[RMDB]
RNA sequence: GGGAACGACUCGAGUAGAGUCGAAAAGAUAUGGACCCUCCGAUAAGCUGGUGUCGGAAACGACACACAGCUUUUGACGGAGGUCCUAAGUCAAAUCUGCGUAACAAGUUCGCUUGUUACGCAGAAACAACGAGUGGUUCUUCGGAACCACUCGUUGAAAAGAAACAACAACAACAAC
Reactivity to DMS in 0.01 (KOAc 150mM, MgCl2 10mM, bicine 150mM(pH8.5), 24C), signal-to-noise 1, nucleotides 027 to 126: g000a020u000a300u000g000g010a060c110c040c000u000c000c000g040a130u000a000a040g040c000u010g000g000u000g030u000c000g000g000a080a030a110c010g000a010c000a000c000a140c030a020g000c010u000u010u000u000g000a240c280g000g000a080g010g010u000c010c000u000a010a160g010u000c020a030a140a110u000c000u000g000c000g000u000a000a000c000a010a010g000u000u020c300g030c000u000u000g020u000u000a000c000g020c000a000g000a030a080a070
The record gives the reactivity of an RNA of 177 nucleotides to DMS. Values cover nucleotides 27 to 126.